[RMDB]
RNA sequence: GGGAACGACUCGAGUAGAGUCGAAAAGAGGUUUUGACUCCAGCUGAUUGGACACAUCACAUUGAGAAGCAUAACUUCAAGGUGCCAUUUGUUUGCGGUGCCAAGGAUCUAGGUGAGGCUUUGAGAACCAACUGACUAUCUUCGGAUAGUCAGUUGGAAAAGAAACAACAACAACAAC
Reactivity to 2A3 in 0.01 (KOAc 150mM, MgCl2 10mM, bicine 150mM(pH8.5), 24C), signal-to-noise 2, nucleotides 027 to 126: g020a020g000g000u030u060u140u150g070a100c020u020c000c020a030g000c060u080g030a120u060u080g040g050a010c010a000c000a080u110c020a010c020a090u120u060g070a040g000a170a000g040c010a050u020a180a040c020u040u030c020a030a030g030g000u000g000c030c000a040u080u010u200g250u020u140u130g080c090g000g040u020g070c030c000a020a000g070g000a020u030c060u150a040g020g030u050g050a040g010g040c000u060u070u110g070a100g030a050a050
Reactivity to DMS in 0.01 (KOAc 150mM, MgCl2 10mM, bicine 150mM(pH8.5), 24C), signal-to-noise 2, nucleotides 027 to 126: g030a080g010g010u010u010u030u000g010a120c040u010c040c020a090g020c090u010g020a110u000u000g000g000a060c150a060c120a040u000c040a060c130a090u000u000g010a170g000a060a060g000c050a130u000a080a090c040u000u000c030a050a190g000g010u000g030c030c020a080u000u020u010g040u000u000u010g010c090g000g030u000g010c050c040a060a210g020g000a030u000c070u000a050g000g040u010g000a060g020g000c070u000u010u000g000a130g000a120a160
This 177-nucleotide RNA was probed chemically with 2A3 and DMS. High 2A3 reactivity points to a flexible backbone, as in loops and unpaired stretches. Reactivities are given for positions 27 through 126. The RNA was probed in 150 mM KOAc, 10 mM MgCl2 and 150 mM bicine (pH 8.5) at 24 C. The DMS profile rests on 1,413 reads. Source: RMDB library OK2TRN, as collected in RNAgym. 2A3 adducts were read by reverse transcription with SuperScript II with manganese.